[RMDB]
RNA sequence: GGGAACGACUCGAGUAGAGUCGAAAAAUUUAUUGCUUUCCCUUGACCGAGAGGUCUGGGUAAUCCUUUAAUACUCAUCGUGCUGGGGAUUGAUUCUUGUAAUUAUUAAUCAUGAACGAGGAAUUCCGUAGUACUAAAACUUCGGUUUUAGUACUACAAAAGAAACAACAACAACAAC
Reactivity to 2A3 in 0.01 (KOAc 150mM, MgCl2 10mM, bicine 150mM(pH8.5), 24C), signal-to-noise 2, nucleotides 027 to 126: a000u090u100u080a080u050u070g020c010u000u030u020c010c010c000u000u080g020a030c000c010g010a010g000a040g020g010u010c030u020g000g020g000u020a050a120u100c020c000u090u070u040a100a060u070a070c030u020c070a160u060c080g070u060g060c030u040g040g040g040g020a020u040u000g010a020u040u030c010u030u070g060u020a060a060u070u140a050u070u050a060a010u040c010a020u020g020a040a030c040g010a040g050g040a030a060u100u030c060c080
Reactivity to DMS in 0.01 (KOAc 150mM, MgCl2 10mM, bicine 150mM(pH8.5), 24C), signal-to-noise 3, nucleotides 027 to 126: a080u020u010u000a040u010u000g020c170u000u010u000c030c000c000u000u020g010a010c010c000g030a230g010a170g010g030u000c030u000g010g000g030u010a030a030u000c130c010u000u000u010a060a080u000a070c060u000c040a110u010c130g010u000g020c040u000g020g000g000g020a160u000u000g000a040u000u000c020u000u000g010u010a100a070u020u020a040u000u000a040a030u000c020a040u000g000a160a090c040g000a020g000g010a130a140u000u000c060c050